[RMDB]
RNA sequence: GGGAACGACUCGAGUAGAGUCGAAAAUACACAAAUCAGAGGAUAUCGUCAUGGAUAUCGCUGAAGUUGCUAAAGGAUUGCAGGCUGAAUUAGAAUGUAAAAGCGCACCUUUAACUGAAUCCGAAUACCUCUAACACGAGUUCGCUCGUGUUAGAGGAAAAGAAACAACAACAACAAC
Reactivity to DMS in 0.01 (KOAc 150mM, MgCl2 10mM, bicine 150mM(pH8.5), 24C), signal-to-noise 2, nucleotides 027 to 126: u010a110c150a180c090a090a110a130u020c000a000g010a030g020g000a010u000a000u000c000g000u000c300a100u010g000g000a000u000a000u000c020g040c000u000g000a020a120g020u010u000g030c090u000a010a030a050g030g000a070u000u000g020c000a060g020g010c040u000g020a040a110u010u000a080g040a150a090u000g030u000a050a100a130a180g010c090g020c010a020c010c020u010u000u020a050a090c080u000g000a080a100u000c000c040g020a170a120u000a050
Reactivity to 2A3 in 0.01 (KOAc 150mM, MgCl2 10mM, bicine 150mM(pH8.5), 24C), signal-to-noise 2, nucleotides 027 to 126: u160a020c060a030c030a030a100a100u060c000a000g020a030g090g030a030u000a000u010c040g140u120c070a060u090g130g000a010u000a000u000c000g020c000u010g020a080a110g120u190u070g000c040u040a030a030a010g030g030a130u050u260g030c020a020g150g000c020u010g030a060a010u240u120a230g160a300a110u240g000u170a010a050a010a070g000c020g000c000a020c010c000u010u070u020a070a010c070u060g080a020a060u040c000c000g050a030a030u090a150

Background
Source: RMDB library OK2TST, as collected in RNAgym. Chemical mapping of a 177-nucleotide RNA with DMS and 2A3.